[RMDB]
RNA sequence: GGGAACGACUCGAGUAGAGUCGAAAAGUAUCAUUUUGAAUUAUGAUUUUUCAAUUCCUUUUAUCCCGGGCAAGAAAAAAAGUCAAAGCCAAGAGAUGCCUGACUUUGACUUUCUAAUCAUUGAAUCUUAUUAACACACUUUCGAGUGUGUUAAUAAAAAAGAAACAACAACAACAAC
Reactivity to 2A3 in 0.01 (KOAc 150mM, MgCl2 10mM, bicine 150mM(pH8.5), 24C), signal-to-noise 6, nucleotides 027 to 126: g070u080a040u100c050a050u060u080u100u120g090a110a060u130u060a030u140g060a040u040u040u010u040u050c020a030a040u060u100c010c000u020u060u060u090a120u030c000c000c000g020g050g000c080a090a050g120a060a090a030a020a010a000a000g000u000c000a000a000a000g000c010c010a090a010g040a010g020a080u170g090c000c020u010g010a020c000u010u000u010g000a010c000u000u020u000c030u080a050a070u040c050a060u020u110g080a040a060u020c020
Reactivity to DMS in 0.01 (KOAc 150mM, MgCl2 10mM, bicine 150mM(pH8.5), 24C), signal-to-noise 4, nucleotides 027 to 126: g000u020a050u010c060a040u000u010u010u020g010a090a080u010u010a060u010g010a070u000u010u010u010u020c050a070a140u010u000c050c000u010u010u000u020a150u000c020c010c020g030g000g040c100a040a110g020a000a010a120a080a020a010a000g000u000c000a030a010a010g030c040c010a030a040g000a300g000a120u010g010c080c030u000g010a040c000u010u000u000g000a010c000u000u000u000c080u010a060a090u020c070a100u010u010g000a070a100u030c070